[RMDB]
RNA sequence: GGGAACGACUCGAGUAGAGUCGAAAAGUCCUAGUAUUAUAACUAACAUCUUAACUAGGCCACCUGGCAAUGGAGACUGGGCCAGCCUGUGCAAUGAUCCUUACUCCUUUAAUUUUGAGACUGUCGCCCUUACGCCCUUAUUCGUAAGGGCGUAAGGAAAAGAAACAACAACAACAAC
Reactivity to 2A3 in 0.01 (KOAc 150mM, MgCl2 10mM, bicine 150mM(pH8.5), 24C), signal-to-noise 3, nucleotides 027 to 126: g030u030c000c000u000a000g020u020a040u210u100a120u070a140a100c090u040a060a060c050a130u060c050u170u080a070a060c020u010a010g010g000c010c000a040c000c000u000g060g000c040a050a100u080g040g010a050g040a070c070u060g030g010g000c010c000a020g010c020c010u050g030u040g010c030a070a140u120g010a060u060c010c000u040u060a110c020u020c010c000u060u060u080a170a180u070u180u090u130g070a070g040a040c010u050g040u110c040g040c010
Reactivity to DMS in 0.01 (KOAc 150mM, MgCl2 10mM, bicine 150mM(pH8.5), 24C), signal-to-noise 4, nucleotides 027 to 126: g000u000c000c010u000a020g010u000a060u000u000a060u000a140a150c170u010a150a160c140a090u000c070u000u000a090a060c030u000a040g010g000c030c160a090c080c030u010g000g020c030a090a070u000g020g000a070g000a100c080u000g000g010g000c020c010a060g000c080c060u010g020u000g010c040a050a070u010g010a070u000c030c030u000u010a090c040u000c010c030u000u000u010a060a090u000u000u000u000g000a110g010a090c100u000g010u000c070g000c080